RNA sequence: GGGAACGACUCGAGUAGAGUCGAAAAACGAUGCUGUAUCCGGCGGCUUCAAUCGCAGGCAUGCAGGCGGCCAACACGUCGCGGCUGACAGCUUGGGUGAUGUUCUCGACCAGCUUGCCGCCGUAGGUGGUGAUGCGCGUCCAUUUGCGCGUUACCGCUAGACUUCUUCCUUCGGGAAGAAGUCUAGAAAAGAAACAACAACAACAAC
Reactivity to 2A3 in 0.01 (KOAc 150mM, MgCl2 10mM, bicine 150mM(pH8.5), 24C), signal-to-noise 2, nucleotides 027 to 156: a000c030g030a030u200g110c050u040g010u130a030u020c000c010g020g000c040g010g000c020u300u160c100a030a020u050c030g000c010a000g000g040c040a040u030g010c000a020g100g050c030g060g030c090c000a120a010c120a060c140g080u110c060g010c000g050g000c020u040g060a260c070a060g020c060u170u280g050g030g040u140g040a100u090g070u170u040c040u010c050g080a090c010c010a010g000c010u040u110g030c030c010g010c000c000g050u050a020g000g180u100g000g000u000g010a000u020g000c000g010c010g050u030c100c010a170u070u120u260g000c000g000c010g000u020u010a010c000c000g010